[RMDB]
RNA sequence: GGGAACGACUCGAGUAGAGUCGAAAAGGGGUCACGGUGUAGUUUGCUUGGAUUUACGACUGGAGUGUGACUGAAGCCUCCACGGUCACACUAUGAAGGUCGUUGUCAGCAAAUGAGGCCGUGACGGAGGCACCCAAAAUCGCCUUUCGAGGCGAAAUCACCCCUUUACGUUCGCGUAAAGGGGUGAAAAAGAAACAACAACAACAAC
Reactivity to 2A3 in 0.01 (KOAc 150mM, MgCl2 10mM, bicine 150mM(pH8.5), 24C), signal-to-noise 1, nucleotides 027 to 156: g150g010g020g000u000c000a000c000g020g000u190g020u070a050g020u020u020u000g040c040u070u190g210g000a100u300u180u130a010c000g020a010c010u040g000g100a030g010u000g000u000g000a010c010u010g030a090a050g050c000c020u000c100c010a070c000g000g000u000c000a020c070a030c010u020a230u120g140a090a020g000g000u000c000g000u000u060g000u030c000a000g000c000a000a000a010u010g000a050g090g000c030c000g000u000g000a000c000g000g010a000g000g000c040a040c000c010c000a090a040a000a050u050c020g000c000c000u080u130u100c210g090a040g000g000c020g000a050a010a000
Structure probing data (2A3) for a 207-nucleotide construct. The reactions ran in a buffer of 150 mM KOAc, 10 mM MgCl2 and 150 mM bicine (pH 8.5), at 24 C. The 2A3 profile rests on 1,002 reads.